[RMDB]
RNA sequence: GGGAACGACUCGAGUAGAGUCGAAAACUACAACCUGCCGGACACUGCUACCCACGCCGCACCUGGCGCAUGCGUCGGCCUGUACUUUAAGGAUGGCGAUAGCUGGUACUUCAUGGGUGAUGUGAUUGGGGAUGUGCCGCCUAAGAAAUGCGGCGUGGACCACUAGUUCGUUCGCGAACUAGUGGUCAAAAGAAACAACAACAACAAC
Reactivity to 2A3 in 0.01 (KOAc 150mM, MgCl2 10mM, bicine 150mM(pH8.5), 24C), signal-to-noise 1, nucleotides 027 to 156: c040u140a050c060a030a110c040c020u050g070c060c030g060g000a010c020a020c030u090g000c000u070a030c000c000c000a000c000g000c000c000g000c000a000c030c090u060g020g000c030g060c040a010u030g030c020g010u000c020g000g100c000c000u040g000u150a170c000u000u100u290a070a060g080g000a040u090g020g000c020g040a080u090a060g080c080u020g020g040u020a070c030u030u060c060a090u120g050g000g080u060g050a080u080g100u130g020a090u070u140g000g010g000g010a020u070g090u060g080c040c000g060c020c000u090a150a060g090a040a070a000u120g000c000g000g050c000g000u040g000
Chemical mapping of a 207-nucleotide RNA with 2A3.
The reactions ran in a buffer of 150 mM KOAc, 10 mM MgCl2 and 150 mM bicine (pH 8.5), at 24 C.
2A3 adducts were read by reverse transcription with SuperScript II with manganese.
The 2A3 profile rests on 686 reads.
Reactivities are given for positions 27 through 156.